[RMDB]
Structure probing data (2A3 and DMS) for a 177-nucleotide construct.
2A3 is a SHAPE reagent: it acylates the 2'-hydroxyl of flexible nucleotides of all four kinds.
DMS (dimethyl sulfate) methylates the pairing face of unpaired adenines and cytosines.
RNA sequence: GGGAACGACUCGAGUAGAGUCGAAAAGAGGCUUUGCAGGUGUGGCCGCUGUGUCAUAUGUGUGUCAAUAGGUGGCAGGGAGGAGAGUGACUAUGUCUAUGCUCAGUGUUCUGACCCAUGAACAUCAGAACAUGAGAAAGUUCGCUUUCUCAUGUUCAAAAGAAACAACAACAACAAC
Reactivity to 2A3 in 0.01 (KOAc 150mM, MgCl2 10mM, bicine 150mM(pH8.5), 24C), signal-to-noise 9, nucleotides 027 to 126: g040a010g020g010c030u070u060u090g010c050a030g020g040u050g010u050g080g020c030c010g010c070u060g050u030g020u060c030a030u040a100u160g140u030g030u010g020u050c020a060a090u060a140g050g030u050g040g020c070a040g030g020g020a060g030g020a050g000a010g030u040g020a030c020u050a050u140g030u000c020u030a060u080g010c020u020c050a030g010u020g030u070u000c020u030g080a090c000c000c010a010u070g050a040a020c020a040u070c010a030
Reactivity to DMS in 0.01 (KOAc 150mM, MgCl2 10mM, bicine 150mM(pH8.5), 24C), signal-to-noise 8, nucleotides 027 to 126: g000a080g010g000c060u000u010u010g010c050a060g000g010u010g010u000g000g010c040c040g020c070u000g010u010g010u000c050a050u010a080u000g020u010g020u010g010u010c060a070a100u020a100g020g020u000g000g020c040a070g000g000g000a090g010g000a080g000a090g010u010g000a060c070u010a070u020g010u000c030u010a060u030g000c030u000c040a100g020u010g000u010u000c010u000g000a180c050c020c020a110u020g000a060a070c120a080u020c150a110

It was measured as part of the RMDB libraries RFM100 and RFMREP. Reactivities are given for positions 27 through 126. The RNA was probed in 150 mM KOAc, 10 mM MgCl2 and 150 mM bicine (pH 8.5) at 24 C.